This 207-nucleotide RNA was probed chemically with 2A3. The RNA was probed in 150 mM KOAc, 10 mM MgCl2 and 150 mM bicine (pH 8.5) at 24 C. 2A3 adducts were read by reverse transcription with SuperScript II with manganese.
[RMDB]
RNA sequence: GGGAACGACUCGAGUAGAGUCGAAAAGUGACAUCGGGACGACUUGCCUGAACAUCAGGCAACUGGUGACUCAUCGAUGAGACCCUAGAACGGUAUUCGAUUAAUGCUUUCGUUCUGUAAAGACGAAUAUUUGUCUGGUCAAAAUCAACGAAGAGGACUUCCACCCCUGAUUCGUCAGGGGUGGAAGAAAAGAAACAACAACAACAAC
Reactivity to 2A3 in 0.01 (KOAc 150mM, MgCl2 10mM, bicine 150mM(pH8.5), 24C), signal-to-noise 1, nucleotides 027 to 156: g050u010g020a020c000a000u050c000g050g100g050a070c060g000a000c000u050u090g000c000c000u030g030a190a090c060a230u210c000a000g000g000c000a010a020c020u030g000g010u030g090a040c020u010c100a020u040c030g030a030u010g000a010g050a090c000c000c000u040a030g010a140a000c030g020g010u010a000u020u010c000g000a050u110u040a210a080u250g100c000u020u100u060c020g040u140u120c090u110g180u270a080a080a000g010a000c030g000a030a030u040a060u020u060u190g030u000c000u000g040g000u020c000a000a000a000a200u000c010a000a040c070g070a070a040g000a080g060g040a040